[RMDB]
RNA sequence: GGGAACGACUCGAGUAGAGUCGAAAAGAUAUGGACGGUUCAACUUUUGACGUAUUUCGAUCGGAAACGAUGUACGAUAAGUUGACCGUCCUAAGUCAAAACCCUAACGUGUUCGCACGUUAGGGAACGACAGAAAUAAGUUCGCUUAUUUCUGUCGAAAAGAAACAACAACAACAAC
Reactivity to DMS in 0.01 (KOAc 150mM, MgCl2 10mM, bicine 150mM(pH8.5), 24C), signal-to-noise 8, nucleotides 027 to 126: g010a030u000a300u000g000g010a010c010g000g010u020u010c010a010a010c000u000u000u000u000g020a230c110g020u000a010u000u000u000c080g010a080u010c170g000g010a130a110a150c010g000a010u000g010u000a000c000g010a140u000a020a010g020u000u000g010a030c000c010g010u000c000c000u000a010a050g010u000c030a100a090a120a130c000c000c000u000a000a000c000g020u000g000u000u010c230g030c000a010c010g010u000u000a000g000g010g010a000a010
Reactivity to 2A3 in 0.01 (KOAc 150mM, MgCl2 10mM, bicine 150mM(pH8.5), 24C), signal-to-noise 9, nucleotides 027 to 126: g010a010u050a020u090g000g000a000c000g020g030u270u300c040a010a010c020u080u120u180u300g210a110c020g010u010a030u000u120u100c130g050a170u100c190g260g160a090a100a050c010g000a000u020g000u020a000c010g050a140u030a210a020g000u000u010g000a000c000c000g000u000c000c000u000a000a000g000u000c000a020a030a070a130c010c000c000u000a000a000c000g000u010g060u100u090c280g010c120a000c010g000u000u000a000g010g000g000a010a020
The record gives the reactivity of an RNA of 177 nucleotides to DMS and 2A3. The reactions ran in a buffer of 150 mM KOAc, 10 mM MgCl2 and 150 mM bicine (pH 8.5), at 24 C. It was measured as part of the RMDB library TTRDEL. For DMS the reverse transcriptase was MarathonRT. Values cover nucleotides 27 to 126. The 2A3 profile rests on 44,959 reads.